[RMDB]
RNA sequence: GGGAACGACUCGAGUAGAGUCGAAAAGCACGGAGACAUGCACGGAAACGUGGACGGAGGCCCCAUGACGAACGUGGCUGUCCGAGGCCUCCGUAUUUGACUGGUAAUUCAGUCGUUAGGACAGCUACCCUAAUAUAUGGUUCGCCAUAUAUUAGGGAAAAGAAACAACAACAACAAC
Reactivity to DMS in 0.01 (KOAc 150mM, MgCl2 10mM, bicine 150mM(pH8.5), 24C), signal-to-noise 9, nucleotides 027 to 126: g010c050a050c060g010g010a140g010a100c060a060u000g020c050a070c070g010g000a060a080a190c050g030u000g010g000a040c020g000g000a030g010g010c000c010c030c020a080u010g010a110c170g000a090a100c160g010u000g010g010c000u000g000u000c000c010g000a070g000g000c000c000u000c000c000g010u000a000u000u010u010g010a010c000u000g010g000u010a110a140u010u010c000a010g010u000c010g010u000u000a180g000g000a030c010a010g000c010u000a100
Reactivity to 2A3 in 0.01 (KOAc 150mM, MgCl2 10mM, bicine 150mM(pH8.5), 24C), signal-to-noise 9, nucleotides 027 to 126: g050c030a010c070g050g040a060g030a050c060a050u130g040c040a020c070g060g040a070a080a020c020g010u010g010g020a010c020g000g010a000g000g000c000c000c000c010a030u060g070a050c180g050a220a020c060g040u050g020g000c000u010g000u000c000c000g000a030g000g000c000c000u000c000c000g000u010a050u030u050u090g000a000c000u000g000g050u110a110a110u150u100c000a000g000u000c000g000u030u050a010g000g000a000c000a000g000c000u040a050